[RMDB]
RNA sequence: GGGAACGACUCGAGUAGAGUCGAAAACUAGUUACAAAGUUAGAACAAUAUUUGGAUCUCCUGGCUUAUCCUCUUGCGCUGCAAGAUGGGCUUUCUUUGCGCUCAACACGCAUUUGCACGAGGCUGUGCACAAACCCAACAACCCAAUUUGUGUUGGCAACCCAAGAACGUUCGCGUUCUUGGGUUGAAAAGAAACAACAACAACAAC
Reactivity to 2A3 in 0.01 (KOAc 150mM, MgCl2 10mM, bicine 150mM(pH8.5), 24C), signal-to-noise 1, nucleotides 027 to 156: c000u030a030g010u120u140a090c070a060a220a000g080u070u090a080g060a080a040c050a220a000u040a180u150u120u160g090g000a050u100c020u000c030c000u030g010g000c000u000u070a040u190c030c000u000c000u010u050g050c160g050c040u090g000c040a040a050g050a160u070g000g020g000c030u050u180u000c050u100u050u110g160c070g010c030u050c000a000a060c010a010c170g050c030a040u050u030u180g000c000a000c030g020a030g100g080c090u040g000u010g000c000a030c010a190a090a030c000c070c000a010a010c010a030a010c040c010c110a050a000u160u100u050g080u010g000u000u030g030g000